[RMDB]
RNA sequence: GGGAACGACUCGAGUAGAGUCGAAAAGGUGGCUCUGAGAGAAGGCUCACACAAACCGUGACAGAGUCACCGAUUUAGCAUGUUCGUCCUACUUAGGACGUCCUAACGUAGUAGGACGUUCAUGCGAGGGUAGCAUUUCCUUCGGGAAGUGCUACCCAAAAGAAACAACAACAACAAC
Reactivity to 2A3 in 0.01 (KOAc 150mM, MgCl2 10mM, bicine 150mM(pH8.5), 24C), signal-to-noise 9, nucleotides 027 to 126: g000g000u000g000g000c000u000c010u020g070a100g010a010g080a300a120g110g010c020u030c040a050c000a000c020a050a240a030c070c090g020u010g010a010c000a010g000a000g000u000c000a000c000c000g000a000u000u010u040a010g000c000a000u000g010u000u010c000g010u000c000c000u010a020c020u080u080a060g130g110a150c070g070u100c030c020u060a110a060c050g080u060a010g010u000a000g010g000a000c000g000u000u010c000a000u000g000c000g000a070
Reactivity to DMS in 0.01 (KOAc 150mM, MgCl2 10mM, bicine 150mM(pH8.5), 24C), signal-to-noise 5, nucleotides 027 to 126: g000g030u000g000g000c000u000c000u000g020a100g010a150g000a100a130g010g000c110u000c150a130c180a100c200a090a150a140c130c100g010u000g010a160c010a010g000a010g010u000c000a010c010c000g000a040u020u030u010a100g000c000a000u000g000u000u010c010g000u000c010c000u000a010c000u000u010a090g000g000a170c180g020u010c050c040u000a070a110c080g000u020a030g000u000a000g000g000a000c000g000u000u010c000a020u000g010c000g010a070
Structure probing data (2A3 and DMS) for a 177-nucleotide construct.
2A3 adducts were read by reverse transcription with SuperScript II with manganese.
Values are in units of 0.01, from 0 to 300, in steps of 10.
Values cover nucleotides 27 to 126.